[RMDB]
Annotation
This 177-nucleotide RNA was probed chemically with DMS and 2A3. It was measured as part of the RMDB library TTRDES. For DMS, 12,687 sequencing reads were counted. The reactions ran in a buffer of 150 mM KOAc, 10 mM MgCl2 and 150 mM bicine (pH 8.5), at 24 C. Values cover nucleotides 27 to 126.

RNA sequence: GGGAACGACUCGAGUAGAGUCGAAAAGAUAUGGAGUAUGAAGUCUGAUGCAUUCGGAAACGAAUGGCAUUGGUGAGACCAUACUCCUAAGUCAAAGUAAAUAGCGCAGUUCGCUGCGCUAUUUACAGGUAUGAGGUAAGUUCGCUUACCUCAUACCAAAAGAAACAACAACAACAAC
Reactivity to DMS in 0.01 (KOAc 150mM, MgCl2 10mM, bicine 150mM(pH8.5), 24C), signal-to-noise 5, nucleotides 027 to 126: g000a010u000a040u010g000g000a030g020u000a000u000g000a160a210g020u000c000u000g010a000u000g010c010a040u000u000c000g020g000a020a010a030c000g010a010a000u000g010g020c000a010u000u000g040g020u020g010a080g000a020c020c010a000u000a010c000u000c000c000u000a010a050g000u000c010a130a140a170g010u010a000a010a010u000a010g010c000g030c000a010g020u000u010c300g030c010u000g020c000g010c000u000a000u000u000u000a000c000a080
Reactivity to 2A3 in 0.01 (KOAc 150mM, MgCl2 10mM, bicine 150mM(pH8.5), 24C), signal-to-noise 7, nucleotides 027 to 126: g010a000u010a010u060g000g000a000g010u010a000u030g050a300a140g030u140c180u300g080a010u000g020c000a010u000u010c010g020g010a020a010a000c010g010a010a020u120g210g160c010a000u010u100g250g090u300g160a040g010a000c000c010a000u010a000c000u000c010c000u000a010a000g000u010c010a120a010a050g000u000a000a010a010u000a000g000c010g000c010a010g020u050u110c200g090c220u000g000c000g000c000u000a000u000u000u000a000c000a000